[RMDB]
Source information:
Source: RMDB library OK2TRN, as collected in RNAgym. Chemical mapping of a 177-nucleotide RNA with DMS and 2A3. In probing experiments dimethyl sulfate is read out at A N1 and C N3, which are open when not base-paired. The DMS profile rests on 2,353 reads.

RNA sequence: GGGAACGACUCGAGUAGAGUCGAAAAGCUAAUCCAUUUUGCGGCGAGAGUACCCUUUACACCCGCACCUGGUCGACGGCCACGGACUCGCCGCUAGCUGACCAGGCCCCGGGCUCAGCAGAGCUUGCAACCCUUACGUUUUCGAACGUAAGGGUUGAAAAGAAACAACAACAACAAC
Reactivity to DMS in 0.01 (KOAc 150mM, MgCl2 10mM, bicine 150mM(pH8.5), 24C), signal-to-noise 3, nucleotides 027 to 126: g010c070u000a100a140u000c110c120a160u010u010u000u010g000c020g000g010c020g020a040g000a200g010u010a150c090c050c110u010u020u010a130c150a140c220c000c010g010c060a080c040c010u000g000g020u000c020g010a130c050g020g010c090c120a080c110g000g020a140c030u000c030g000c000c010g000c000u000a020g020c070u000g000a040c010c030a020g000g020c020c010c000c020g000g010g010c020u000c000a120g010c190a120g010a020g010c000u010u010g000
Reactivity to 2A3 in 0.01 (KOAc 150mM, MgCl2 10mM, bicine 150mM(pH8.5), 24C), signal-to-noise 2, nucleotides 027 to 126: g000c010u050a050a050u190c140c100a180u160u090u110u290g000c000g000g010c010g010a010g010a000g100u160a170c000c020c000u000u060u100a130c130a020c080c000c030g030c010a020c020c020u030g020g000u000c010g060a300c030g020g000c010c070a120c110g070g050a040c000u010c030g010c010c000g050c000u000a000g040c010u020g020a040c000c000a020g050g000c000c000c000c010g010g000g020c000u010c010a100g090c080a050g040a010g000c020u010u080g000
Notes:
For DMS the reverse transcriptase was MarathonRT.